An RNA of 177 nucleotides, treated with 2A3 and DMS and read out base by base. The reactions ran in a buffer of 150 mM KOAc, 10 mM MgCl2 and 150 mM bicine (pH 8.5), at 24 C. For DMS the reverse transcriptase was MarathonRT. Source: RMDB library TTRDES, as collected in RNAgym. For 2A3, 4,285 sequencing reads were counted.
[RMDB]
RNA sequence: GGGAACGACUCGAGUAGAGUCGAAAAGAUAUGGACGAGGUGUGGCUAGAAGUGGCUCGGAAACGAGCCAUACUUCUUGGACCCACCCUCGUCCUAAGUCAAAACAGCCUCUGUUCGCAGAGGCUGACCCACAGAUUAACUUCGGUUAAUCUGUGGGAAAAGAAACAACAACAACAAC
Reactivity to 2A3 in 0.01 (KOAc 150mM, MgCl2 10mM, bicine 150mM(pH8.5), 24C), signal-to-noise 2, nucleotides 027 to 126: g010a000u050a030u160g000g000a000c010g000a000g040g050u170g000u030g150g030c120u130a100g010a020a010g020u010g000g000c000u000c020g040g000a030a060a030c010g010a000g000c000c000a020u010a000c000u010u000c010u030u160g200g130a180c010c000c000a010c000c000c000u010c000g000u000c000c000u000a000a000g010u010c020a010a020a100a180c020a010g010c030c010u040c010u040g080u100u130c300g000c120a010g000a000g000g000c000u000g000a020
Reactivity to DMS in 0.01 (KOAc 150mM, MgCl2 10mM, bicine 150mM(pH8.5), 24C), signal-to-noise 3, nucleotides 027 to 126: g000a050u010a300u010g000g000a000c010g000a030g010g000u020g010u010g020g020c050u010a040g000a010a020g060u000g010g010c000u000c000g000g000a060a110a150c000g000a030g000c000c000a020u000a040c030u000u000c000u000u010g030g000a160c300c010c000a030c020c020c010u020c010g000u010c000c000u000a000a060g020u000c040a130a070a200a240c030a010g010c000c000u000c000u000g000u000u000c230g030c020a020g000a040g000g010c000u000g000a050